[RMDB]
RNA sequence: GGGAACGACUCGAGUAGAGUCGAAAAAAACUUUUGUGACUUGCUGAAACGGGACUAAUUUCCUCACCGAGGCUAAGCAAGUAAAAUACGCCUCUCAUAUCCUUACCUGAGGGUGGUAAGGAAAUAACCUGCAACGCUUCCUUCGGGAAGCGUUGAACCUGUACUAUUACUUCGGUAAUAGUACAGGAAAAGAAACAACAACAACAAC
Reactivity to 2A3 in 0.01 (KOAc 150mM, MgCl2 10mM, bicine 150mM(pH8.5), 24C), signal-to-noise 3, nucleotides 027 to 156: a000a000a020c160u160u090u090u100g090u040g040a060c060u020u030g000c020u070g050a040a060a050c050g000g030g000a010c050u120a100a120u060u040u070c010c020u050c040a030c020c070g010a010g010g000c030u030a030a000g010c040a060a030g060u160a030a030a030a030u130a020c060g000c000c020u010c000u000c030a040u030a050u180c000c000u000u010a020c010c020u050g060a070g020g070g030u040g000g000u000a000a000g000g000a010a000a010u010a000a020c010c040u080g000c010a000a000c010g010c010u000u010c000c020u030u050c110g060g000g000a000a000g000c000g000u000u000g000a000a010
Reactivity to DMS in 0.01 (KOAc 150mM, MgCl2 10mM, bicine 150mM(pH8.5), 24C), signal-to-noise 1, nucleotides 027 to 156: a000a030a110c040u010u000u000u000g040u000g000a210c140u000u010g030c020u000g010a090a130a150c100g000g000g010a130c080u010a060a080u010u020u000c000c000u010c030a070c010c040g000a050g040g030c040u010a120a190g000c090a080a070g010u030a040a050a020a150u000a140c050g000c020c010u010c020u000c070a130u010a090u000c010c000u000u050a070c110c030u000g010a100g000g060g030u000g010g040u110a030a000g030g050a030a020a060u000a040a080c030c020u000g050c010a030a010c010g000c060u000u010c010c000u000u000c200g020g000g030a000a010g010c000g020u000u000g010a060a110